[RMDB]
RNA sequence: GGGAACGACUCGAGUAGAGUCGAAAAUAAUGACCACCAUCUUAAUAGACCUGGUGUCUAUUGUGGCUCUGAUUUUAUUGACAUUGUCAGGCGGUUAGCAGUAUCACUGUUCCAGCCUAUUACUUAUUGUUUAUUAAGUGUUCGCACUUAAUAAACAAAAAGAAACAACAACAACAAC
Reactivity to DMS in 0.01 (KOAc 150mM, MgCl2 10mM, bicine 150mM(pH8.5), 24C), signal-to-noise 4, nucleotides 027 to 126: u000a050a060u000g000a070c050c040a100c030c250a070u000c180u010u000a040a030u000a010g000a020c020c030u010g000g020u010g020u000c000u010a030u000u000g020u000g010g010c110u000c030u010g010a070u000u000u000u000a100u030u010g000a060c090a120u000u010g020u000c080a020g010g010c050g000g010u000u000a060g000c030a020g020u000a140u000c200a060c030u000g000u000u000c050c030a170g020c040c010u000a060u010u010a080c060u000u000a100u000
Reactivity to 2A3 in 0.01 (KOAc 150mM, MgCl2 10mM, bicine 150mM(pH8.5), 24C), signal-to-noise 5, nucleotides 027 to 126: u030a010a060u060g010a010c010c010a000c010c020a050u040c040u120u220a040a030u010a030g000a020c010c040u130g270g000u180g010u070c000u010a020u020u060g010u010g010g020c040u020c030u050g070a070u030u030u060u140a140u060u110g050a020c060a070u080u130g050u140c030a020g010g000c020g000g030u040u090a010g000c010a010g000u070a060u300c090a030c050u020g030u030u020c010c000a040g020c000c010u060a070u080u100a050c000u040u060a040u130